Structure probing data (2A3) for a 207-nucleotide construct. For 2A3 the reverse transcriptase was SuperScript II with manganese. Values are in units of 0.01, from 0 to 300, in steps of 10. Values cover nucleotides 27 to 156.
[RMDB]
RNA sequence: GGGAACGACUCGAGUAGAGUCGAAAAUCUUUCACCUGACAGCCAGUCAGUAUCCUUCUCUCUGGGGUAUACCCUGGGAAAUCAAGCUCUUUCCUCAUGAAGGCCAACAGUAGGGGUGGAGAUGAGCGUGAGGAUGUCCUUAGGCUACGCUAGUGUACUUUUAGGACGUCUUCGGACGUCCUAAAAGAAAAGAAACAACAACAACAAC
Reactivity to 2A3 in 0.01 (KOAc 150mM, MgCl2 10mM, bicine 150mM(pH8.5), 24C), signal-to-noise 1, nucleotides 027 to 156: u010c000u080u100u080c040a020c020c060u010g040a010c010a040g170c120c070a060g020u060c010a000g000u090a000u040c000c030u120u060c010u010c010u020c060u060g090g000g010g000u190a080u140a160c000c010c000u000g000g000g050a000a050a050u080c080a090a020g020c060u040c000u080u100u110c030c000u060c010a020u130g110a110a080g090g000c030c100a100a060c010a160g140u270a090g010g000g010g000u010g030g040a090g010a060u120g030a050g000c070g060u050g040a010g040g010a040u000g040u060c010c010u040u160a010g020g010c000u090a010c020g000c140u120a060g040u030g010u200a090